Chemical mapping of a 207-nucleotide RNA with 2A3.

RNA sequence: GGGAACGACUCGAGUAGAGUCGAAAAAGGUGAUUUCUCCUGCACCUUUAUCAAUGGAGGAACUCGACUUUGCUGUGGGUCCCUAAGGGACCUUAGGUGCAGACAGUUACCGGCGGUGAAGUGUGAGCAUAGGUUCGUGUCUUCGGACACGAACCAAGGUAAAUUGCAACUUCGGUUGCAAUUUACCAAAAGAAACAACAACAACAAC
Reactivity to 2A3 in 0.01 (KOAc 150mM, MgCl2 10mM, bicine 150mM(pH8.5), 24C), signal-to-noise 2, nucleotides 027 to 156: a000g000g010u000g000a030u010u050u000c000u010c000c000u150g040c020a020c010c000u060u260u170a040u040c010a000a050u270g000g000a000g010g010a000a020c040u010c000g020a000c010u030u010u010g000c000u030g000u080g020g000g000u020c000c000c010u100a170a290g000g020g010a020c000c000u010u050a020g000g000u020g010c000a070g120a290c020a040g020u080u140a020c020c010g030g010c000g000g000u040g020a010a030g020u060g040u050g090a010g010c080a080u110a110g000g000u000u000c000g000u000g000u000c000u020u040c180g090g000a000c000a000c020g010a000a000c000c000a000a000